The record gives the reactivity of an RNA of 177 nucleotides to 2A3 and DMS.
Values are in units of 0.01, from 0 to 300, in steps of 10.
The reactions ran in a buffer of 150 mM KOAc, 10 mM MgCl2 and 150 mM bicine (pH 8.5), at 24 C.
[RMDB]
RNA sequence: GGGAACGACUCGAGUAGAGUCGAAAAUUUUCUACUGACAUAAACUUAAGUCCAACUAUUUGGAAACUUUAUUUGUAAAGCGCUCUUUGAUCUCAAUGCUGUCUGGCUGGACAUUUGCCAAAGCCCAUAAGACCUGUUAUUUCGAUAACAGGUCUUAAAAAGAAACAACAACAACAAC
Reactivity to 2A3 in 0.01 (KOAc 150mM, MgCl2 10mM, bicine 150mM(pH8.5), 24C), signal-to-noise 3, nucleotides 027 to 126: u030u000u030u040c000u010a110c040u080g060a050c010a090u280a090a130a020c040u130u060a050a000g040u070c010c000a050a030c080u140a140u300u080u010g010g000a150a000a010c010u020u060u070a050u040u170u070g080u100a090a010a030g030c020g000c010u010c040u010u060u110g030a050u030c010u010c030a050a070u100g020c030u030g060u020c010u040g010g050c000u010g000g020a000c030a070u040u090u030g020c020c000a050a040a020g010c000c000c000a030
Reactivity to DMS in 0.01 (KOAc 150mM, MgCl2 10mM, bicine 150mM(pH8.5), 24C), signal-to-noise 4, nucleotides 027 to 126: u010u020u010u020c030u000a110c110u020g010a090c060a070u020a080a070a050c080u040u000a050a080g010u010c000c020a030a080c300u010a080u020u000u010g010g000a060a080a120c030u000u010u010a060u020u010u000g000u010a040a070a110g020c050g000c020u000c020u000u010u010g010a060u010c020u000c020a060a040u010g010c040u000g000u010c030u010g000g040c030u000g010g020a040c110a020u000u010u010g030c060c050a040a060a130g000c010c010c010a140